Chemical mapping of a 207-nucleotide RNA with DMS and 2A3. The RNA was probed in 150 mM KOAc, 10 mM MgCl2 and 150 mM bicine (pH 8.5) at 24 C. For DMS, 2,965 sequencing reads were counted. Reactivities are given for positions 27 through 156. For 2A3 the reverse transcriptase was SuperScript II with manganese.
[RMDB]
RNA sequence: GGGAACGACUCGAGUAGAGUCGAAAAACAACAGAUAGCUGGAACCAGCGUAGAAUUCUACGCAUAUCCAUAGCGAAUGGUACCUGUAAAGAAAAUAAUGAAGGAUGUACAAGUACCAACAGCUUUCAAUGCCAUGGUGAUGUCAAUCACAUAUGCACAUAUAUGAUGGCUUCGGCCAUCAUAUAUGAAAAGAAACAACAACAACAAC
Reactivity to DMS in 0.01 (KOAc 150mM, MgCl2 10mM, bicine 150mM(pH8.5), 24C), signal-to-noise 2, nucleotides 027 to 156: a090c070a070a080c010a150g030a090u010a070g040c020u000g000g000a090a100c190c070a140g000c000g040u010a020g010a270a220u010u000c020u000a040c000g030c000a170u000a040u000c060c050a120u000a020g040c020g000a230a160u000g020g050u000a020c010c000u000g020u020a080a080a190g000a130a060a120a090u020a060a090u000g020a070a140g020g020a160u000g010u000a080c000a030a020g040u000a020c000c010a050a070c070a120g010c010u000u000u000c030a130a080u010g000c020c030a110u000g020g000u020g030a070u020g000u000c180a090a120u000c040a040c000a110u000a050u000g020c060a120
Reactivity to 2A3 in 0.01 (KOAc 150mM, MgCl2 10mM, bicine 150mM(pH8.5), 24C), signal-to-noise 6, nucleotides 027 to 156: a000c030a020a000c030a050g110a150u120a040g050c040u020g030g010a090a110c090c050a050g000c010g000u000a000g030a110a240u300u090c000u010a000c000g000c010a010u050a040u080c010c010a040u080a040g020c020g080a050a030u010g000g000u000a000c000c000u010g000u020a050a090a010g170a050a090a030a040u300a060a050u160g120a050a080g080g070a030u080g010u060a010c000a010a020g000u000a010c000c000a010a020c040a020g010c000u000u120u070c060a060a060u100g030c050c020a010u080g030g060u010g010a010u030g130u200c080a110a020u020c010a020c000a050u110a020u060g010c010a000